[RMDB]
RNA sequence: GGGAACGACUCGAGUAGAGUCGAAAAGAUAUGGAGGCAGGGAGGGUCCGUUUCGUUUGACGGAAUAGCUAUCGGAAACGAUAGCUAUUCCCGAGAAACGGAAACCCUUUGAUCUGCCUCCUAAGUCCAAUAUGCCUAAGUUCGCUUAGGCAUAUUGAAAAGAAACAACAACAACAAC
Reactivity to DMS in 0.01 (KOAc 150mM, MgCl2 10mM, bicine 150mM(pH8.5), 24C), signal-to-noise 8, nucleotides 027 to 126: g010a080u010a300u010g000g010a020g010g020c000a000g010g010g000a010g020g020g020u010c010c000g000u000u000u000c000g010u000u000u010g020a280c300g000g000a030a010u000a000g010c000u000a000u000c000g010g000a130a090a260c010g010a010u000a000g010c000u000a000u000u000c000c000c010g000a080g000a010a000a010c000g000g000a020a040a060c010c000c000u000u010u010g000a080u010c000u000g010c000c000u000c000c010u000a010a060g000u000c050
Reactivity to 2A3 in 0.01 (KOAc 150mM, MgCl2 10mM, bicine 150mM(pH8.5), 24C), signal-to-noise 2, nucleotides 027 to 126: g020a010u100a030u190g000g010a000g000g000c010a000g030g020g030a010g010g010g030u060c010c000g000u020u000u020c060g040u120u220u300g090a040c030g000g000a010a000u000a000g000c000u000a000u000c010g040g000a110a060a040c010g000a000u000a000g000c000u010a000u000u000c010c010c000g010a000g000a000a010a000c010g020g020a080a030a040c000c000c010u030u060u050g020a020u010c000u000g000c010c000u000c000c000u000a000a000g020u000c000